Chemical mapping of a 177-nucleotide RNA with DMS and 2A3. Source: RMDB library TTRDEL, as collected in RNAgym.

RNA sequence: GGGAACGACUCGAGUAGAGUCGAAAAGAUAUGGAUCUUAAUAAGACAGCAUGUGUAUCGGAAACGAUAUGUAUGCAAUGACGUUAAGAGUCCUAAGUCAAAAUCGAAUACGUUCGCGUAUUCGAAACUUGUAAUAAAACUUCGGUUUUAUUACAAGAAAAGAAACAACAACAACAAC
Reactivity to DMS in 0.01 (KOAc 150mM, MgCl2 10mM, bicine 150mM(pH8.5), 24C), signal-to-noise 6, nucleotides 027 to 126: g010a010u000a010u020g000g000a150u000c000u000u000a000a000u000a030a170g020a270c100a060g020c000a000u000g000u000g010u000a000u000c000g020g010a010a010a020c010g020a000u000a000u000g000u000a010u000g020c000a300a200u010g010a060c050g010u000u000a000a000g010a030g010u010c000c000u010a000a110g000u010c000a090a050a080a110u000c010g010a010a010u000a010c000g010u000u000c270g020c020g020u000a000u000u000c000g000a010a050a090
Reactivity to 2A3 in 0.01 (KOAc 150mM, MgCl2 10mM, bicine 150mM(pH8.5), 24C), signal-to-noise 5, nucleotides 027 to 126: g000a000u010a010u040g010g000a000u000c000u000u010a000a010u070a120a070g160a160c140a080g000c000a010u020g010u000g000u020a010u000c000g000g030a010a000a000c010g000a000u000a000u030g040u020a000u000g000c000a020a190u050g000a000c000g000u010u000a000a000g000a040g250u100c000c010u000a000a000g010u010c020a020a010a020a300u040c000g000a000a010u000a010c020g030u020u100c300g000c000g110u000a010u000u000c000g010a030a000a010

Values cover nucleotides 27 to 126. The 2A3 profile rests on 16,777 reads. Conditions: 150 mM KOAc, 10 mM MgCl2 and 150 mM bicine (pH 8.5), 24 C. Values are in units of 0.01, from 0 to 300, in steps of 10. The DMS profile rests on 9,530 reads.